[RMDB]
RNA sequence: GGGAACGACUCGAGUAGAGUCGAAAACUAUUUAUAGACAGAACAGUGGAAAACGUAUAUCGCUAUAAACCUUAAACCCCGAGUCUUCCAGUCGUACUAUUCCACAUAGGCGAGGCAUAAGCGAAAGCGAGGACUAUGCGUUCGCGCAUAGUCCUCGAAAAGAAACAACAACAACAAC
Reactivity to DMS in 0.01 (KOAc 150mM, MgCl2 10mM, bicine 150mM(pH8.5), 24C), signal-to-noise 1, nucleotides 027 to 126: c150u000a150u020u020u000a020u020a070g000a040c010a300g000a100a070c050a140g000u010g020g020a190a030a140a020c090g040u000a110u000a030u050c010g000c000u000a090u000a000a080a040c200c060u010u010a020a090a140c010c040c020c000g010a080g000u000c000u000u000c000c000a070g000u000c050g000u000a070c080u040a110u000u070c000c030a070c090a150u000a070g000g000c070g000a070g000g020c040a020u050a150a110g040c020g020a110a050a090g000
Reactivity to 2A3 in 0.01 (KOAc 150mM, MgCl2 10mM, bicine 150mM(pH8.5), 24C), signal-to-noise 2, nucleotides 027 to 126: c000u000a040u000u130u040a190u110a000g010a000c090a000g090a160a040c040a030g080u000g080g110a040a180a030a040c050g110u080a140u010a030u210c020g000c040u050a000u050a050a000a160c000c000u000u080a070a120a030c000c010c120c040g000a000g000u000c000u020u000c010c000a030g020u000c020g000u010a230c070u000a000u010u150c010c020a070c020a150u040a010g030g060c000g000a050g000g070c060a130u060a110a010g040c000g070a010a030a000g090
An RNA of 177 nucleotides, treated with DMS and 2A3 and read out base by base.
Source: RMDB library OK1LIB, as collected in RNAgym.
The RNA was probed in 150 mM KOAc, 10 mM MgCl2 and 150 mM bicine (pH 8.5) at 24 C.
The 2A3 profile rests on 847 reads.